Structure probing data (DMS and 2A3) for a 177-nucleotide construct.
[RMDB]
RNA sequence: GGGAACGACUCGAGUAGAGUCGAAAAUUGGUAAAACUGUCUUAGAUCAUUUGAAAGACGGUGGUUAUGAUGUUAUUGCCAUCGGUAAAAUUAAUGACAUUUAUGAUGGUGAAGGUGUAACAGAAGCCUUACAGGCACUGUUCGCAGUGCCUGUAAGAAAAGAAACAACAACAACAAC
Reactivity to DMS in 0.01 (KOAc 150mM, MgCl2 10mM, bicine 150mM(pH8.5), 24C), signal-to-noise 4, nucleotides 027 to 126: u040u020g010g020u020a040a110a090a010c000u000g010u000c000u010u000a120g010a100u020c070a050u020u010u010g010a080a080a050g020a050c010g000g020u000g000g000u000u000a040u010g010a100u040g020u010u020a050u030u010g000c000c010a000u000c020g040g010u020a020a030a040a080u040u010a050a060u040g000a090c220a060u000u010u000a030u030g000a010u010g020g020u000g000a070a050g010g000u020g000u030a030a060c040a030g000a130a140g000c040
Reactivity to 2A3 in 0.01 (KOAc 150mM, MgCl2 10mM, bicine 150mM(pH8.5), 24C), signal-to-noise 3, nucleotides 027 to 126: u090u060g090g020u080a010a000a090a000c010u010g070u080c020u080u060a090g020a250u020c000a060u000u090u300g070a060a050a000g150a010c040g000g000u010g020g030u000u090a030u080g240a080u130g100u200u120a090u000u110g020c010c000a000u000c010g060g000u090a150a000a000a000u140u050a040a020u070g070a030c030a060u020u010u010a110u150g070a000u000g040g010u000g050a080a000g190g000u150g000u110a030a000c000a040g090a090a010g050c010
For 2A3, 1,105 sequencing reads were counted.